[RMDB]
RNA sequence: GGGAACGACUCGAGUAGAGUCGAAAAGCGCGACUUCGCCGAUACCGCGGUCGGCGUGAUCGUCAACCGGAUGAAGAAAGGCGAGAUCGGUAUCGACAGCCGCAAGGCGGCCGAGCAGAUCGGCGCAGCCCAUACCCACUUUCGAGUGGGUAUGGGCAAAAGAAACAACAACAACAAC
Reactivity to DMS in 0.01 (KOAc 150mM, MgCl2 10mM, bicine 150mM(pH8.5), 24C), signal-to-noise 2, nucleotides 027 to 126: g010c080g000c010g020a090c100u000u000c010g020c000c020g000a090u020a130c080c050g010c060g000g010u010c050g000g000c010g070u000g000a110u000c010g050u010c040a020a100c000c000g010g000a150u010g010a120a160g010a070a120a130g000g010c000g010a060g000a020u000c010g010g000u050a050u000c000g000a000c000a040g000c000c000g020c300a070a160g000g030c010g010g030c010c000g000a020g000c100a040g010a060u000c040g000g000c010g000c010a090
Reactivity to 2A3 in 0.01 (KOAc 150mM, MgCl2 10mM, bicine 150mM(pH8.5), 24C), signal-to-noise 3, nucleotides 027 to 126: g030c010g010c010g080a110c070u040u040c040g010c000c000g030a040u060a090c040c030g010c030g120g020u030c010g000g020c010g020u070g150a220u280c020g010u020c010a040a020c010c010g020g070a150u150g080a060a120g090a080a090a040g070g010c010g000a020g000a030u050c000g040g010u100a280u180c030g040a040c010a050g000c020c030g010c050a080a040g070g030c000g010g010c030c000g010a000g030c080a010g020a100u000c020g060g000c010g000c000a010

Source: RMDB library OK2TRN, as collected in RNAgym. Chemical mapping of a 177-nucleotide RNA with DMS and 2A3. For 2A3, 2,428 sequencing reads were counted. Values cover nucleotides 27 to 126.